[RMDB]
RNA sequence: GGGAACGACUCGAGUAGAGUCGAAAAGAUAUGGACAUCGUGGGAAUCGUUGAAAUCGGAAACGAUGGAGAUUAACACGAGUGUCCUAAGUCAAAGUAAUCCUUUGGCUUCGGCCAAAGGAUUACAAGAACAUACCCAACUUCGGUUGGGUAUGUUCAAAAGAAACAACAACAACAAC
Reactivity to 2A3 in 0.01 (KOAc 150mM, MgCl2 10mM, bicine 150mM(pH8.5), 24C), signal-to-noise 1, nucleotides 027 to 126: g030a000u090a080u100g000g000a000c010a020u000c010g010u020g000g020g040a050a000u020c010g120u290u020g030a020a050a010u010c010g020g000a120a050a030c030g000a010u000g010g020a080g000a000u050u040a000a020c000a000c000g040a040g130u040g000u000c010c000u000a120a000g030u010c040a210a000a040g000u000a000a000u000c000c000u010u000u010g000g000c000u050u060c300g090g000c000c000a010a000a010g050g000a000u000u000a000c000a010a020
Reactivity to DMS in 0.01 (KOAc 150mM, MgCl2 10mM, bicine 150mM(pH8.5), 24C), signal-to-noise 2, nucleotides 027 to 126: g010a050u000a300u000g010g000a030c000a020u020c010g000u000g000g010g020a010a020u000c010g010u000u020g010a060a130a020u020c000g020g000a120a100a250c000g000a030u010g010g000a080g000a020u000u000a030a020c010a010c000g000a030g000u020g020u020c000c000u000a030a080g010u010c040a080a090a150g000u000a000a030u000c000c000u000u000u000g000g010c000u000u000c220g000g030c000c000a000a010a010g010g000a000u000u000a000c010a090a070